[RMDB]
RNA sequence: GGGAACGACUCGAGUAGAGUCGAAAAGAUCUGAAGAAAGGGCCACAUGAAUUCUGUUCACAGCAUACGCUUUAUAUUAAGGAUGGCGACGAUGGUUACUUCCUUCCUUAUCCAGACCCUUCAAGAACUCGAUAAUGAAGUUCGCUUCAUUAUCGAGAAAAGAAACAACAACAACAAC
Reactivity to 2A3 in 0.01 (KOAc 150mM, MgCl2 10mM, bicine 150mM(pH8.5), 24C), signal-to-noise 2, nucleotides 027 to 126: g010a020u040c020u020g000a010a010g040a060a040a010g010g000g010c020c000a020c020a030u090g090a070a070u170u020c050u080g060u060u070c050a020c010a090g060c010a050u090a140c020g000c050u050u100u060a170u050a020u140u180a080a000g120g000a050u040g030g050c020g030a010c050g060a080u050g040g020u050u010a170c000u070u010c000c000u010u030c000c040u010u070a020u000c010c000a010g060a140c000c000c000u050u080c060a120a050g040a060a050
Reactivity to DMS in 0.01 (KOAc 150mM, MgCl2 10mM, bicine 150mM(pH8.5), 24C), signal-to-noise 2, nucleotides 027 to 126: g010a140u000c110u000g000a070a050g040a050a040a020g000g000g020c020c030a030c080a110u000g000a070a090u010u000c130u020g000u000u000c080a040c110a070g010c110a080u000a130c110g000c020u010u000u000a060u000a170u040u000a070a060g010g000a010u000g000g020c130g020a080c080g020a070u000g030g010u000u000a090c050u000u000c020c010u000u020c050c120u000u000a040u000c030c030a070g000a160c010c010c010u000u000c100a040a060g010a060a170
This 177-nucleotide RNA was probed chemically with 2A3 and DMS. Source: RMDB library 15KREP, as collected in RNAgym. Conditions: 150 mM KOAc, 10 mM MgCl2 and 150 mM bicine (pH 8.5), 24 C. The DMS profile rests on 1,539 reads. Values cover nucleotides 27 to 126.